[RMDB]
RNA sequence: GGGAACGACUCGAGUAGAGUCGAAAAAUUUGCUGGUUCGCAGGGCAUCUGCGGGUUCAAGUUUUGCAGCCCUCCGGGCGGGCAGGUACGCCGCCAGCAUGGUCAGCAGUACCACAAGAAUUACAUGUAUUGUACGUGGCUUCGGCCACGUACAAUAAAAAGAAACAACAACAACAAC
Reactivity to 2A3 in 0.01 (KOAc 150mM, MgCl2 10mM, bicine 150mM(pH8.5), 24C), signal-to-noise 1, nucleotides 027 to 126: a000u100u130u000g000c010u090g030g050u010u170c010g000c070a040g000g090g070c020a220u090c020u020g000c000g000g000g000u040u020c100a000a150g030u080u000u110u030g000c030a030g030c000c000c000u140c090c010g030g040g000c010g040g090g000c000a030g060g020u010a030c000g050c000c000g000c030c000a030g000c000a010u080g090g000u140c000a000g000c000a000g010u090a000c000c000a050c000a110a070g000a020a050u260u230a100c030a150u300g090
Reactivity to DMS in 0.01 (KOAc 150mM, MgCl2 10mM, bicine 150mM(pH8.5), 24C), signal-to-noise 1, nucleotides 027 to 126: a100u000u000u000g000c280u000g050g060u000u000c000g030c100a040g020g000g010c290a240u010c070u020g010c060g030g000g070u010u000c170a050a100g060u000u120u040u010g060c040a140g000c000c000c000u000c280c110g020g010g000c000g000g000g010c000a040g000g000u000a010c040g040c090c050g000c010c040a040g000c150a090u010g050g040u000c030a100g020c050a000g000u000a110c010c000a290c090a260a120g020a100a030u050u010a110c170a030u000g010
This 177-nucleotide RNA was probed chemically with 2A3 and DMS. In probing experiments dimethyl sulfate is read out at A N1 and C N3, which are open when not base-paired. The reactions ran in a buffer of 150 mM KOAc, 10 mM MgCl2 and 150 mM bicine (pH 8.5), at 24 C. The 2A3 profile rests on 622 reads.